[RMDB]
RNA sequence: GGGAACGACUCGAGUAGAGUCGAAAAGAAGCUUUCAGAGGGUGGAGUUUUAACCGACUGAAAACAGCUGAAACACCCUCAGUGUGGUCUACAUACGAUGUCAAUUUCAAGUAUUCUGGCAGCAUCCCGUAUCUGGAUGGAAGUUUUUAUUUGAGUCAACAGAAUUGAACUUCGGUUCAAUUCUGUUAAAAGAAACAACAACAACAAC
Reactivity to DMS in 0.01 (KOAc 150mM, MgCl2 10mM, bicine 150mM(pH8.5), 24C), signal-to-noise 1, nucleotides 027 to 156: g020a090a070g000c030u000u020u020c030a130g020a050g020g070g060u000g040g010a170g020u000u000u000u000a070a160c100c050g000a170c100u000g000a080a130a050a180c020a090g030c000u020g000a120a090a100c030a030c010c000c020u010c000a070g030u010g010u000g020g050u020c050u010a090c060a100u010a050c080g020a090u000g010u020c060a100a090u020u000u030c030a060a170g000u000a110u000u000c060u020g000g000c060a090g040c020a040u000c020c030c020g030u000a020u010c040u010g010g020a130u000g000g010a030a120g020u000u000u000u000u000a100u030u010u000g040a210g000u000c040
Reactivity to 2A3 in 0.01 (KOAc 150mM, MgCl2 10mM, bicine 150mM(pH8.5), 24C), signal-to-noise 1, nucleotides 027 to 156: g060a060a010g000c000u030u070u080c100a020g020a010g020g010g000u020g020g040a040g000u050u000u000u080a090a050c050c030g120a040c020u080g010a070a070a030a080c040a010g050c020u140g000a020a000a000c010a020c000c000c000u010c000a020g000u020g020u030g020g050u060c090u120a030c070a060u070a020c040g060a020u040g120u070c020a210a220u070u180u130c070a070a000g010u020a070u120u000c120u150g060g000c070a010g020c020a050u110c000c000c000g040u000a060u040c020u080g000g000a030u030g010g060a000a090g000u120u050u000u060u100a200u020u130u210g060a080g060u300c030

Structure probing data (DMS and 2A3) for a 207-nucleotide construct. For 2A3 the reverse transcriptase was SuperScript II with manganese. The 2A3 profile rests on 416 reads.